RNA sequence: GGGAACGACUCGAGUAGAGUCGAAAAGAUAUGGAGUACCGUCGCUUGGAUUUAACCUGUAGGGAAAUUAUGGUCGGAAACGACCAUAUUUCCCUACAGGUUUGUCAGCGACUGUACUCCUAAGUCACAAUUAGUGUGUGUUCGCACACACUAAUUGAAAAGAAACAACAACAACAAC
Reactivity to DMS in 0.01 (KOAc 150mM, MgCl2 10mM, bicine 150mM(pH8.5), 24C), signal-to-noise 2, nucleotides 027 to 126: g000a070u000a300u000g000g000a010g000u000a020c010c120g020u000c000g030c000u000u020g020g000a040u010u020u000a000a010c000c010u010g020u000a020g000g000g000a010a000a010u000u010a010u000g020g000u010c000g010g010a130a120a220c010g010a010c000c000a000u000a000u000u000u000c000c000c000u000a000c000a000g000g000u010u000u000g010u000c010a040g010c010g010a010c000u000g010u000a000c000u010c000c000u000a010a060g000u000c040a270
An RNA of 177 nucleotides, treated with DMS and read out base by base. The RNA was probed in 150 mM KOAc, 10 mM MgCl2 and 150 mM bicine (pH 8.5) at 24 C. The DMS profile rests on 4,944 reads. The data come from the RNA Mapping Database (RMDB), library TTRINS.